[RMDB]
RNA sequence: GGGAACGACUCGAGUAGAGUCGAAAAUAGCGGCAUUCAACGACAAAGCUCAUCGCCUGAUUCGGGCCGAUGAUGAAACUACUCAUCCAAUAGGUAUGGACGGUAAGACCAAAUGAUCAGCGACACCCUGCACAUUAUUUUCGGCAAUGCAAGCCACCUUAUAGGCGGUUUUCGAACCGCCUAUAAGAAAAGAAACAACAACAACAAC
Reactivity to DMS in 0.01 (KOAc 150mM, MgCl2 10mM, bicine 150mM(pH8.5), 24C), signal-to-noise 1, nucleotides 027 to 156: u000a120g010c020g020g070c000a080u030u030c030a040a090c060g070a140c080a100a100a260g000c140u010c010a080u000c050g040c000c050u010g010a180u000u030c090g020g010g000c120c090g040a010u000g020a060u000g000a110a110a070c030u000a040c040u000c010a130u010c030c050a040a110u010a050g020g000u000a090u000g020g010a080c050g030g010u010a040a060g000a040c050c000a040a110a090u040g000a070u000c080a080g000c030g020a100c040a060c040c010c010u000g050c060a060c130a040u000u000a060u000u000u000u000c050g020g050c060a060a060u010g000c000a060a120g010c040c010a090c150
Reactivity to 2A3 in 0.01 (KOAc 150mM, MgCl2 10mM, bicine 150mM(pH8.5), 24C), signal-to-noise 3, nucleotides 027 to 156: u080a000g010c020g000g010c020a030u060u020c050a140a050c100g110a050c070a060a100a010g010c000u000c010a000u010c000g030c000c000u230g090a300u210u280c200g000g030g000c070c090g000a000u000g020a030u060g000a080a100a010c040u060a010c010u020c030a060u050c000c040a080a110u050a130g070g000u040a040u110g090g020a020c040g000g030u050a110a030g030a050c030c000a040a070a090u170g020a100u050c030a010g040c010g030a000c000a040c050c010c010u040g040c090a070c020a070u050u120a030u070u180u100u090c010g000g000c020a060a030u130g030c020a060a040g010c020c030a010c010